[RMDB]
RNA sequence: GGGAACGACUCGAGUAGAGUCGAAAACGUGGUUAAUUUAGCGUAAACUUAAAUAAUUCGCAGAAAUAACGCCUUACAAAAAACCAAAGGUUGUCCUCGGUUGUGCCCUGAAUUUCGGAUAAAGUCCGCCUUCGUUAUACUUCGGUAUAACGAAGGCAAAAGAAACAACAACAACAAC
Reactivity to DMS in 0.01 (KOAc 150mM, MgCl2 10mM, bicine 150mM(pH8.5), 24C), signal-to-noise 1, nucleotides 027 to 126: c110g000u000g080g070u010u000a030a150u000u010u050a190g050c000g000u000a030a110a090c220u090u000a110a090a120u010a000a300u000u000c200g010c120a210g040a000a000a060u040a090a200c030g000c100c090u110u000a060c300a000a240a090a090a020a020c020c060a000a120a070g000g000u000u000g010u000c000c000u000c100g000g040u000u000g000u020g040c000c050c010u000g040a070a090u000u000u000c000g000g000a010u140a100a090a080g000u000c020c000
Reactivity to 2A3 in 0.01 (KOAc 150mM, MgCl2 10mM, bicine 150mM(pH8.5), 24C), signal-to-noise 1, nucleotides 027 to 126: c000g000u040g000g100u110u070a020a000u050u040u250a020g000c000g080u040a090a140a180c070u120u230a130a140a100u170a080a050u170u110c000g010c000a000g140a040a230a000u110a020a020c000g000c090c060u110u070a150c150a060a040a010a000a000a010c010c020a070a090a040g030g000u000u060g020u070c000c000u000c000g000g000u000u000g070u150g070c000c010c000u000g010a080a060u190u130u010c030g040g010a030u020a060a040a020g100u000c010c010
Structure probing data (DMS and 2A3) for a 177-nucleotide construct. Values cover nucleotides 27 to 126. The 2A3 profile rests on 351 reads. For 2A3 the reverse transcriptase was SuperScript II with manganese.